[RMDB]
Overview
An RNA of 177 nucleotides, treated with DMS and read out base by base. DMS adducts were read by reverse transcription with MarathonRT. For DMS, 726 sequencing reads were counted.

RNA sequence: GGGAACGACUCGAGUAGAGUCGAAAAGAUAUGGACGAUGGGUAGAGGAGCCUACCCACCUCGGAAACGAGAGGGCUCUACCCACCUACACCAUCGUCCUAAGUCAAAACCGGACUUCGGUCCGGAAGCCUAUACCACGGUUCGCCGUGGUAUAGGCAAAAGAAACAACAACAACAAC
Reactivity to DMS in 0.01 (KOAc 150mM, MgCl2 10mM, bicine 150mM(pH8.5), 24C), signal-to-noise 1, nucleotides 027 to 126: g030a070u000a290u000g000g000a060c000g000a000u000g000g020g030u000a010g020a140g010g000a000g040c000c000u050a110c180c050c150a220c120c020u000c000g010g010a060a060a170c000g000a040g010a180g000g000g030c010u000c000u010a050c080c000c040a300c080c000u000a020c000a080c000c000a020u000c010g000u000c000c000u000a060a070g010u000c010a040a040a070a090c000c000g000g000a000c000u010u020c080g020g010u000c000c000g010g000a020a030